[RMDB]
RNA sequence: GGGAACGACUCGAGUAGAGUCGAAAAGAUAUGGAAACACGAGCCCAGUAAGUUUCGAUAAGCUGCGUAGGUCGGAAACGACCUGAUCAGCUUUUGACGAAAGAUGUGGGCUCGUGUUUCCUAAGUCCCUACAUUUGUACUUCGGUACAAAUGUAGGAAAAGAAACAACAACAACAAC
Reactivity to DMS in 0.01 (KOAc 150mM, MgCl2 10mM, bicine 150mM(pH8.5), 24C), signal-to-noise 3, nucleotides 027 to 126: g010a120u000a300u010g020g000a000a010a000c000a000c020g000a010g010c010c010c000a090g010u010a120a180g010u000u000u020c000g020a140u000a030a010g010c000u010g000c300g000u000a000g020g030u010c010g000g000a130a080a220c000g010a010c000c000u000g020a070u000c000a010g030c000u000u000u000u000g010a230c210g000a010a010a030g010a130u000g010u000g000g000g010c000u000c000g000u000g010u000u000u000c000c010u010a030a110g010u020c070
Structure probing data (DMS) for a 177-nucleotide construct. The RNA was probed in 150 mM KOAc, 10 mM MgCl2 and 150 mM bicine (pH 8.5) at 24 C.